[RMDB]
RNA sequence: GGGAACGACUCGAGUAGAGUCGAAAAAGGAUAGGAUUCGUCCUAUCCUACACCAAAACCUCCUGGCGGUGCGGCGCCGGCCCCGCCGGGAAGGCCGCGUUAUUGGUAGCUGGUUCGCCAGCUACAAGAGUAUAUGCCAAUUCGUUGGCAUAUACUCAAAAGAAACAACAACAACAAC
Reactivity to 2A3 in 0.01 (KOAc 150mM, MgCl2 10mM, bicine 150mM(pH8.5), 24C), signal-to-noise 3, nucleotides 027 to 126: a010g000g000a000u010a010g000g010a020u040u070c190g040u030c060c000u000a000u000c000c000u000a010c010a030c000c000a020a060a060a090c000c010u010c000c000u010g000g010c000g000g040u020g020c040g090g050c070g040c070c030g040g000c010c010c000c000g000c000c000g010g000g000a000a010g020g010c040c040g110c070g110u140u160a170u160u210g130g000u000a000g000c000u000g000g040u020u000c130g020c060c000a000g000c000u000a000c000a000a000
Reactivity to DMS in 0.01 (KOAc 150mM, MgCl2 10mM, bicine 150mM(pH8.5), 24C), signal-to-noise 4, nucleotides 027 to 126: a030g000g000a020u000a010g010g000a030u000u020c210g010u000c000c000u000a020u000c000c000u000a020c100a240c010c020a050a090a080a210c020c010u000c000c000u000g000g010c010g010g010u010g010c040g040g010c050g020c100c080g000g000c020c050c030c010g020c020c000g000g000g000a020a020g000g020c110c100g000c110g000u010u000a090u010u010g010g020u000a000g000c000u000g000g010u000u010c190g010c000c000a010g010c000u000a000c010a050a070
The data come from the RNA Mapping Database (RMDB), library M2PK50.
Chemical mapping of a 177-nucleotide RNA with 2A3 and DMS.
The RNA was probed in 150 mM KOAc, 10 mM MgCl2 and 150 mM bicine (pH 8.5) at 24 C.
For DMS, 5,559 sequencing reads were counted.
In probing experiments dimethyl sulfate is read out at A N1 and C N3, which are open when not base-paired.
High 2A3 reactivity points to a flexible backbone, as in loops and unpaired stretches.
The 2A3 profile rests on 9,066 reads.